[RMDB]
RNA sequence: GGGAACGACUCGAGUAGAGUCGAAAACAAGGAUCGCGUCCGCAUGGAAAAGUGCGUGAUGAUGCCUUGCCAGCUGACCAGCAACGAUGAUCCAGAGCGGUGGUGAACAUACCAUUAACUGCUACAACAGCGAGCUCACCUUCGGGUGAGCUCGCUGAAAAGAAACAACAACAACAAC
Reactivity to 2A3 in 0.01 (KOAc 150mM, MgCl2 10mM, bicine 150mM(pH8.5), 24C), signal-to-noise 1, nucleotides 027 to 126: c000a040a050g000g010a050u040c000g000c000g090u000c000c000g000c090a000u070g160g120a100a030a140a260g040u000g000c000g130u170g000a000u200g010a100u100g030c000c000u000u000g060c050c000a000g030c000u020g040a150c050c000a030g090c070a070a070c120g090a000u270g110a050u000c000c040a000g010a000g000c020g110g030u070g020g000u000g000a000a050c110a160u190a120c050c000a030u150u080a120a000c000u120g000c000u080a020c000a270a000